Chemical mapping of a 177-nucleotide RNA with DMS.

RNA sequence: GGGAACGACUCGAGUAGAGUCGAAAAUUAAAAUUUGAGGCAUCAAGUGGAAGGGUAGUCGGCAGGGUGAAGGUCGGGAAGAAUGAGGACUCUAAACCAACCAAGCUUAUGAGUGGAAUACAAAAAAGUUUCUAGAGAGAUUCGUCUCUCUAGAAACAAAAGAAACAACAACAACAAC
Reactivity to DMS in 0.01 (KOAc 150mM, MgCl2 10mM, bicine 150mM(pH8.5), 24C), signal-to-noise 1, nucleotides 027 to 126: u030u010a050a090a130a080u000u000u000g000a150g000g010c110a070u010c060a010a080g000u000g010g000a110a080g030g000g020u000a050g010u010c110g010g040c140a040g010g000g020u000g000a090a030g010g020u010c040g020g000g010a100a020g000a050a060u010g010a150g020g010a060c040u000c040u010a030a050a070c020c000a060a090c030c070a060a120g000c020u000u000a020u020g000a040g010u020g010g000a150a060u010a110c080a010a040a110a090a110a110